[RMDB]
RNA sequence: GGGAACGACUCGAGUAGAGUCGAAAACAAGGAGGGUAGUGUGAUCAAUUUCUGUUACAUGCAUCAAAUGGAACUUGCUAAUGGUACACAUACCGGUUCAGCAUUUGAUGGUACUAUGUAUGGUGCCCACUCACCAAUAGUUCGCUAUUGGUGAGUGAAAAGAAACAACAACAACAAC
Reactivity to DMS in 0.01 (KOAc 150mM, MgCl2 10mM, bicine 150mM(pH8.5), 24C), signal-to-noise 5, nucleotides 027 to 126: c100a120a120g010g020a090g010g000g010u000a040g020u010g020u010g000a060u000c090a070a090u000u000u010c040u000g010u000u000a040c050a040u000g020c060a030u010c040a030a030a030u000g000g000a020a030c020u000u000g030c150u010a080a060u000g010g010u010a080c160a090c100a060u000a050c110c090g010g000u000u000c030a100g000c040a030u000u000u000g000a030u000g010g000u000a030c070u000a040u010g010u010a030u000g010g010u010g010c030c070
Reactivity to 2A3 in 0.01 (KOAc 150mM, MgCl2 10mM, bicine 150mM(pH8.5), 24C), signal-to-noise 5, nucleotides 027 to 126: c030a010a070g080g030a040g010g050g000u040a040g020u030g020u040g110a060u060c040a050a090u050u090u010c030u030g050u030u030a030c020a030u040g050c000a020u020c020a030a050a020u020g010g010a010a020c000u040u070g030c030u110a110a060u060g010g050u110a040c140a000c010a120u040a040c010c000g010g010u020u010c020a100g000c010a040u040u010u070g040a040u030g000g020u030a040c020u040a020u120g050u030a050u100g060g000u030g020c020c000
Structure probing data (DMS and 2A3) for a 177-nucleotide construct. The reactions ran in a buffer of 150 mM KOAc, 10 mM MgCl2 and 150 mM bicine (pH 8.5), at 24 C. For 2A3, 8,433 sequencing reads were counted. The data come from the RNA Mapping Database (RMDB), library 15KREP. 2A3 adducts were read by reverse transcription with SuperScript II with manganese.